Chemical mapping of a 207-nucleotide RNA with 2A3.
It was measured as part of the RMDB library RNAMAK.
For 2A3, 674 sequencing reads were counted.
For 2A3 the reverse transcriptase was SuperScript II with manganese.
The reactions ran in a buffer of 150 mM KOAc, 10 mM MgCl2 and 150 mM bicine (pH 8.5), at 24 C.

RNA sequence: GGGAACGACUCGAGUAGAGUCGAAAAGGGGUCUCUGACUUGGACCUCCCGUAGUUUUGAGUAUACUGAAGCCUCCACGGUAUACAAUGAUGAGGUUCGAAGGGAGCUAGUCAGAGACGGAGGCACCCAAAGGUGACGCAGUUCGCUGCGUCACCAACAUCCUGGGUAUCUUCGGAUACCCAGGAUGAAAAGAAACAACAACAACAAC
Reactivity to 2A3 in 0.01 (KOAc 150mM, MgCl2 10mM, bicine 150mM(pH8.5), 24C), signal-to-noise 1, nucleotides 027 to 156: g040g000g030g010u000c040u000c010u010g000a010c060u170u210g080g070a160c030c050u050c000c000c000g050u030a090g110u020u030u100u260g080a020g000u000a010u000a000c010u010g040a130a020g000c000c000u000c000c010a000c000g010g000u010a010u000a010c130a100a040u140g060a080u070g030a020g180g110u110u170c170g100a060a160g000g020g010a020g050c010u020a000g030u000c000a000g000a000g000a000c000g000g010a000g020g010c000a040c000c000c020a040a130a030g000g000u000g000a000c000g000c010a020g020u020u090c130g130c120u000g000c000g030u010c010a020c000c010a000a010